This 177-nucleotide RNA was probed chemically with 2A3 and DMS. For DMS the reverse transcriptase was MarathonRT. The reactions ran in a buffer of 150 mM KOAc, 10 mM MgCl2 and 150 mM bicine (pH 8.5), at 24 C. It was measured as part of the RMDB libraries RFM100 and RFMREP. Values cover nucleotides 27 to 126.
RNA sequence: GGGAACGACUCGAGUAGAGUCGAAAAUUCCGUGGCCGUAAAUGCAGGUUCACAGCGCUUCGUAUCGCGGCAAUAUCGCCAGUGGUGCUGUCGUGAUGCGGUCUUCGCAUGGACCGCACAAUGAAGACGCUAGCGUGUAGUUCGCUACACGCUAGCGAAAAGAAACAACAACAACAAC
Reactivity to 2A3 in 0.01 (KOAc 150mM, MgCl2 10mM, bicine 150mM(pH8.5), 24C), signal-to-noise 3, nucleotides 027 to 126: u080u000c030c000g030u120g110g000c050c040g090u110a060a090a070u080g000c050a090g010g000u030u060c010a030c040a040g020c030g010c000u080u040c010g020u040a010u060c010g000c010g040g010c000a020a000u060a070u060c040g040c130c090a170g050u210g160g000u060g000c010u000g000u000c000g000u030g010a030u010g000c000g000g000u020c020u100u070c020g050c040a040u090g010g000a000c000c000g000c000a030c040a000a150u230g050a070a040g050a020
Reactivity to DMS in 0.01 (KOAc 150mM, MgCl2 10mM, bicine 150mM(pH8.5), 24C), signal-to-noise 2, nucleotides 027 to 126: u010u020c000c140g000u050g010g050c010c060g050u000a020a150a120u030g000c030a070g000g000u000u000c030a060c140a020g000c020g000c300u030u000c000g010u000a040u000c010g000c010g010g030c030a000a060u000a020u000c060g000c080c200a160g060u020g010g010u030g000c040u010g000u020c030g000u010g000a070u000g060c000g000g000u000c040u010u000c170g030c090a230u010g000g010a000c000c000g000c000a050c170a070a130u000g000a060a070g000a220